Chemical mapping of a 207-nucleotide RNA with 2A3 and DMS. The DMS profile rests on 1,933 reads. For 2A3, 881 sequencing reads were counted.

[RMDB]
RNA sequence: GGGAACGACUCGAGUAGAGUCGAAAAUGCAGUUCCCGAUAGAAAGGCUAAGCACCUCGCAAUGAUAAGGUGGGACUUUUCCUUCUGGAACCAAGCGGUUGGUUCCGAGGGGGGUGUGAUCCAGGUACCGCCGUAGAAACUGGAUUACGACGUCUACGCCUCAAGUAUUCUUCGGAAUACUUGAGGCAAAAGAAACAACAACAACAAC
Reactivity to 2A3 in 0.01 (KOAc 150mM, MgCl2 10mM, bicine 150mM(pH8.5), 24C), signal-to-noise 2, nucleotides 027 to 156: u120g040c050a000g000u010u000c000c000c030g020a030u100a090g050a000a000a000g030g000c010u020a020a020g000c010a010c000c020u160c100g080c030a170a140u130g070a080u120a110a050g030g020u010g000g030g030a010c020u060u080u070u010c020c020u120u060c150u210g000g000a000a000c000c000a060a000g070c020g080g040u020u020g000g000u000u000c000c010g040a050g010g000g040g000g020g070u120g040u040g040a030u000c010c000a010g030g010u010a000c050c040g000c020c010g000u070a030g060a010a230a000c000u000g000g010a030u050u090a010c030g040a020c060g010u040c040u080a000c050
Reactivity to DMS in 0.01 (KOAc 150mM, MgCl2 10mM, bicine 150mM(pH8.5), 24C), signal-to-noise 1, nucleotides 027 to 156: u010g000c140a070g020u000u000c000c000c010g040a220u010a000g000a020a020a000g010g030c020u000a050a160g060c030a000c000c080u000c070g050c050a150a140u010g010a300u010a100a070g020g000u010g040g000g020a040c050u000u000u000u010c060c010u060u000c000u000g050g020a020a020c000c010a130a300g080c190g000g000u000u020g000g070u010u000c020c000g000a030g000g000g000g040g080g110u000g010u010g010a020u010c030c040a100g020g020u020a130c070c000g030c030c190g080u000a110g020a080a100a170c000u000g000g010a070u000u000a090c010g000a120c100g010u000c020u010a170c160